[RMDB]
Chemical mapping of a 177-nucleotide RNA with DMS and 2A3. In probing experiments dimethyl sulfate is read out at A N1 and C N3, which are open when not base-paired. It was measured as part of the RMDB libraries RFM100 and RFMREP. Conditions: 150 mM KOAc, 10 mM MgCl2 and 150 mM bicine (pH 8.5), 24 C.
RNA sequence: GGGAACGACUCGAGUAGAGUCGAAAAUGCUAUCUAACGGGGGUGUCAGGGCGGCUGAGGGGAAGGAGGCUCUAGUACGAGAGGAACGAGCCUCCGGCGCCACUGGUUUACCGGUUGUCCGGCAGGGCGUAAGCUUCAGUUUCGACUGAAGCUUACGAAAAGAAACAACAACAACAAC
Reactivity to DMS in 0.01 (KOAc 150mM, MgCl2 10mM, bicine 150mM(pH8.5), 24C), signal-to-noise 7, nucleotides 027 to 126: u030g000c080u010a060u020c050u010a080a140c090g000g020g000g010g010u020g020u020c100a130g010g010g000c080g010g000c060u020g000a060g010g000g010g010a150a060g010g010a010g010g020c000u000c010u000a060g010u000a120c000g000a220g000a180g000g000a090a110c160g000a010g000c010c000u000c000c000g010g000c090g000c020c020a100c050u010g000g020u010u020u020a120c080c030g000g000u010u010g010u010c020c020g000g020c040a040g000g000g000
Reactivity to 2A3 in 0.01 (KOAc 150mM, MgCl2 10mM, bicine 150mM(pH8.5), 24C), signal-to-noise 5, nucleotides 027 to 126: u100g000c010u040a070u120c020u060a080a090c040g030g000g000g010g030u060g090u090c040a030g010g040g010c050g020g010c040u060g060a080g010g020g000g010a020a040g010g000a000g010g000c000u000c010u000a010g010u000a000c010g010a010g010a040g110g000a020a000c010g000a000g000c000c000u010c000c000g000g000c010g000c000c010a090c020u020g030g020u070u100u120a090c010c000g010g020u080u080g060u050c020c010g020g010c030a050g020g030g000